This 177-nucleotide RNA was probed chemically with DMS and 2A3.
Values are in units of 0.01, from 0 to 300, in steps of 10.
Values cover nucleotides 27 to 126.
For 2A3 the reverse transcriptase was SuperScript II with manganese.
[RMDB]
RNA sequence: GGGAACGACUCGAGUAGAGUCGAAAAAAAGAUAUGGAUACUCGAACUACUCUCCGAGCCAAGCGAUGAAAUAUAUUCGGAAACGAAUAUAUGGAGCUUGGCGGAGAGCGAGUAUCCUAAGUCAAAAGAUUAUUCUCUUGUUCGCAAGAGAAUAAUCAAAAGAAACAACAACAACAAC
Reactivity to DMS in 0.01 (KOAc 150mM, MgCl2 10mM, bicine 150mM(pH8.5), 24C), signal-to-noise 3, nucleotides 027 to 126: a080a100a100g000a010u010a070u010g000g000a010u000a000c010u000c000g000a050a030c060u020a300c010u000c000u010c000c000g000a200g040c010c000a000a010g020c000g000a110u010g000a090a080a010u000a000u000a000u010u000c000g000g000a020a010a030c000g000a020a000u000a000u000a000u000g000g000a020g010c000u000u000g000g010c000g000g000a000g000a010g010c000g000a010g000u000a000u000c000c000u000a000a060g000u000c010a080a100a140a150
Reactivity to 2A3 in 0.01 (KOAc 150mM, MgCl2 10mM, bicine 150mM(pH8.5), 24C), signal-to-noise 2, nucleotides 027 to 126: a000a010a030g030a020u050a010u060g010g000a000u000a020c000u010c010g020a070a030c050u170a080c010u300c000u000c000c010g120a140g230c020c030a000a000g000c020g300a300u020g000a020a010a000u000a000u000a000u010u000c010g000g020a030a000a000c000g000a010a010u010a010u010a000u010g010g000a010g010c000u000u000g000g000c010g000g000a010g010a000g000c000g000a000g000u000a000u010c000c000u000a000a000g000u010c020a030a010a120a140